RNA sequence: GGGAACGACUCGAGUAGAGUCGAAAAUAAGUUGGAAAGUGGGAGGAUCACAUUUAUCCUUAGGAUGGUGACUCAGGACUCAGUGUGAGGAGUGGACUAAAGGGAUGAGACCCAGGUGACCCAGAAUCCACUAAAAGGCUACUUAGUAGAUGAGGCAGCCUAAAUUUAGGUUCGCCUAAAUUUAGGCAAAAGAAACAACAACAACAAC
Reactivity to 2A3 in 0.01 (KOAc 150mM, MgCl2 10mM, bicine 150mM(pH8.5), 24C), signal-to-noise 2, nucleotides 027 to 156: u100a020a070g020u060u060g020g060a130a110a050g030u040g000g030g000a040g010g060a040u030c050a010c000a010u160u170u100a060u070c020c040u060u060a040g030g000a080u090g000g050u030g000a020c030u040c080a000g020g060a010c000u000c040a000g050u010g010u030g060a000g000g020a000g000u060g010g030a040c050u180a220a050a020g050g000g000a020u030g040a050g040a040c000c000c000a010g050g060u070g030a010c000c000c000a020g050a030a020u000c010c000a000c020u020a040a040a040a030g020g020c000u030a000c000u040u000a010g040u010a000g110a080u030g010a040g010g020c050a000
Reactivity to DMS in 0.01 (KOAc 150mM, MgCl2 10mM, bicine 150mM(pH8.5), 24C), signal-to-noise 2, nucleotides 027 to 156: u000a040a100g020u000u000g010g010a030a060a120g060u010g010g030g020a130g010g000a120u010c050a030c020a130u000u010u000a080u030c030c030u000u000a090g000g040a020u000g010g030u010g000a090c030u000c060a110g000g000a110c000u000c060a060g030u000g000u000g000a100g020g000a190g020u020g000g010a060c080u000a040a080a130g000g000g020a050u010g000a200g020a090c010c020c080a160g020g000u000g010a130c030c020c020a150g010a100a060u000c040c020a040c030u000a040a060a100a130g020g010c030u000a050c090u000u000a110g040u020a070g000a090u000g010a100g030g020c050a130